Chemical mapping of a 177-nucleotide RNA with 2A3. Conditions: 150 mM KOAc, 10 mM MgCl2 and 150 mM bicine (pH 8.5), 24 C. Source: RMDB library OK1LIB, as collected in RNAgym. The 2A3 profile rests on 745 reads.

RNA sequence: GGGAACGACUCGAGUAGAGUCGAAAAUAGCACGUCGUUUUGGUGACCUUUUUUGAGCAGCUCUUCUUCCCUUACUUUGCUGCUCCUGGGUUGGGUUGAGUUUUUGGUCACCUUUUCGACGUGCGAAGGCUUACCAUUGGUUCGCCAAUGGUAAGCCAAAAGAAACAACAACAACAAC
Reactivity to 2A3 in 0.01 (KOAc 150mM, MgCl2 10mM, bicine 150mM(pH8.5), 24C), signal-to-noise 1, nucleotides 027 to 126: u170a040g000c000a010c000g010u010c010g000u000u000u000u000g000g010u000g010a000c000c000u000u070u000u020u070u240g070a030g020c010a000g020c000u000c010u100u000c000u040u040c000c010c010u080u050a200c110u070u090u150g000c000u020g000c000u030c010c070u120g000g040g000u030u050g040g030g000u070u020g030a110g020u070u000u010u080u090g000g020u000c000a000c000c000u000u000u000u000c000g000a000c000g000u000g000c000g010a000a000